[RMDB]
RNA sequence: GGGAACGACUCGAGUAGAGUCGAAAAGAAAAGUCAGCCCCCAGACGCUCGGGAAACGGAUUAUUCCGGUCGACUCCGGAGAAACAAAGUCAAGCGAAGACCCCCUCCCCAAAGGUAGAGGAGUCAGCCAGAUCGCACUGUUCGCAGUGUGAUCUGGAAAAGAAACAACAACAACAAC
Reactivity to 2A3 in 0.01 (KOAc 150mM, MgCl2 10mM, bicine 150mM(pH8.5), 24C), signal-to-noise 1, nucleotides 027 to 126: g000a000a020a000a010g050u010c030a030g000c000c000c000c000c000a000g000a000c020g030c010u020c000g090g010g000a010a010a010c040g000g030a010u000u030a070u100u060c000c000g000g030u010c010g000a020c070u000c100c000g000g000a020g070a000a010a020c020a010a020a000g050u020c020a010a010g010c010g050a020a000g020a000c000c040c000c020c000u000c000c010c000c020a040a000a000g040g020u010a000g030a040g030g010a020g010u020c000a000g000
Reactivity to DMS in 0.01 (KOAc 150mM, MgCl2 10mM, bicine 150mM(pH8.5), 24C), signal-to-noise 2, nucleotides 027 to 126: g000a050a020a020a080g010u010c020a120g030c060c000c000c000c060a040g000a090c060g010c010u000c120g020g000g000a100a090a070c120g000g020a050u000u020a110u020u000c000c000g000g010u000c070g020a040c090u030c000c000g040g040a030g030a040a050a270c090a000a000a070g000u050c020a110a130g040c070g020a080a040g000a060c030c030c020c000c000u030c010c000c000c080a010a110a060g000g000u010a030g010a060g000g000a060g010u000c050a130g040
An RNA of 177 nucleotides, treated with 2A3 and DMS and read out base by base. Conditions: 150 mM KOAc, 10 mM MgCl2 and 150 mM bicine (pH 8.5), 24 C. DMS adducts were read by reverse transcription with MarathonRT. Source: RMDB library OK1LIB, as collected in RNAgym.